[RMDB]
RNA sequence: GGGAACGACUCGAGUAGAGUCGAAAAGGGGUGAACCGGCCCAGGUCGGAAACGGAGCAGGUCAAAACUCCCGUGCUGAUCAGUAGUGGGAUCGCGCCUGUGAAUAGCCACUGCACUCCAGCCUGAGAUGGAAAUCCAAAUUCGUUUGGAUUUCCAUAAAAGAAACAACAACAACAAC
Reactivity to 2A3 in 0.01 (KOAc 150mM, MgCl2 10mM, bicine 150mM(pH8.5), 24C), signal-to-noise 7, nucleotides 027 to 126: g010g000g000g010u020g010a100a040c020c020g010g010c000c010c010a050g050g020u040c010g010g040a120a070a090c040g010g010a030g020c040a010g000g060u100c030a010a020a040a110c040u010c000c010c010g020u040g010c020u060g040a240u120c090a020g040u090a020g080u060g010g050g020a020u040c030g000c010g020c050c020u040g010u020g040a070a110u110a090g020c010c010a070c050u080g000c010a010c020u010c010c000a020g020c020c000u100g030a110g030
Reactivity to DMS in 0.01 (KOAc 150mM, MgCl2 10mM, bicine 150mM(pH8.5), 24C), signal-to-noise 5, nucleotides 027 to 126: g000g010g010g020u000g010a080a120c070c020g030g010c000c020c100a100g000g010u000c020g010g000a100a140a090c070g000g010a230g010c070a030g000g000u000c100a090a100a150a130c160u000c030c020c000g010u010g010c020u000g000a100u030c150a090g020u010a030g010u000g030g000g000a030u000c080g030c190g000c010c030u000g000u010g000a080a130u030a120g010c050c020a090c100u000g000c020a040c020u000c030c020a100g010c020c020u000g000a120g000